Structure probing data (2A3 and DMS) for a 177-nucleotide construct. The reactions ran in a buffer of 150 mM KOAc, 10 mM MgCl2 and 150 mM bicine (pH 8.5), at 24 C. For 2A3, 4,946 sequencing reads were counted. 2A3 adducts were read by reverse transcription with SuperScript II with manganese. Reactivities are given for positions 27 through 126. The DMS profile rests on 4,766 reads.

RNA sequence: GGGAACGACUCGAGUAGAGUCGAAAAGAAGAGGAAAGAAGGACGCGAGACGGUGAACCUGUGAGCGGAAACCCGCUUUAUUCACUGGGGUCGACAACUCUGGGGAGAAAAGGGCGGAUCGGAUGGGGAUACAUGUGAAGUUCGCUUCACAUGUAUCAAAAGAAACAACAACAACAAC
Reactivity to 2A3 in 0.01 (KOAc 150mM, MgCl2 10mM, bicine 150mM(pH8.5), 24C), signal-to-noise 2, nucleotides 027 to 126: g050a020a010g040a020g020g060a090a030a030g070a050a020g020g020a000c030g020c020g070a050g010a030c010g000g050u010g020a040a030c030c060u110g050u080g120a010g000c020g030g000a130a120a150c030c010c030g010c000u060u100u110a090u040u050c020a010c050u030g030g000g030g050u060c040g060a040c030a090a060c010u000c030u050g000g010g020g010a120g070a020a060a020a020g020g000g000c060g000g010a040u040c040g020g020a030u080g010g000g040
Reactivity to DMS in 0.01 (KOAc 150mM, MgCl2 10mM, bicine 150mM(pH8.5), 24C), signal-to-noise 5, nucleotides 027 to 126: g000a090a070g000a090g020g000a050a040a070g020a070a060g010g010a080c100g010c090g000a070g000a080c070g010g010u000g010a030a070c200c140u010g020u010g000a020g000c020g010g010a110a090a130c230c010c000g000c020u000u000u000a060u000u000c030a040c020u000g000g000g010g000u000c040g010a080c130a050a090c050u000c050u010g010g020g000g010a080g000a050a040a050a080g000g000g010c080g000g000a050u000c090g010g000a070u000g000g000g010